[RMDB]
RNA sequence: GGGAACGACUCGAGUAGAGUCGAAAAGAAAGGACUUGGGCUAGACCACACCAAGUCGUGCCUUUUUCGACAGAGGCAACAUAGCGUCUGGCCGGCCGAUCGGCAAGAGAAGACGUUUUGUCGAAGAAAUAUCGCAGGUAUUCGUACCUGCGAUAUUAAAAGAAACAACAACAACAAC
Reactivity to DMS in 0.01 (KOAc 150mM, MgCl2 10mM, bicine 150mM(pH8.5), 24C), signal-to-noise 6, nucleotides 027 to 126: g000a090a100a160g010g010a010c000u010u010g000g010g030c150u010a090g000a280c040c030a140c150a150c000c010a010a010g000u000c010g010u020g010c020c010u000u000u010u010u000c030g000a030c020a020g010a020g010g030c010a100a120c150a070u020a080g000c000g000u000c010u000g000g000c030c040g000g010c110c090g010a120u020c030g000g000c020a120a100g000a110g010a150a040g000a010c000g010u000u000u020u000g000u000c000g000a010a050g000a100
Reactivity to 2A3 in 0.01 (KOAc 150mM, MgCl2 10mM, bicine 150mM(pH8.5), 24C), signal-to-noise 8, nucleotides 027 to 126: g090a030a080a010g200g000a000c010u010u010g010g010g080c090u120a070g060a150c030c020a040c010a010c040c010a000a000g000u000c010g010u030g000c000c000u010u020u000u030u010c000g000a000c000a000g010a010g010g020c020a050a030c060a100u180a030g010c000g010u000c010u040g120g010c000c000g030g030c090c090g130a260u240c040g040g000c030a100a020g110a010g020a190a020g010a010c010g010u040u030u080u000g000u000c010g000a010a000g030a020
An RNA of 177 nucleotides, treated with DMS and 2A3 and read out base by base. The data come from the RNA Mapping Database (RMDB), library OK1LIB. The 2A3 profile rests on 10,863 reads. In probing experiments dimethyl sulfate is read out at A N1 and C N3, which are open when not base-paired. For 2A3 the reverse transcriptase was SuperScript II with manganese.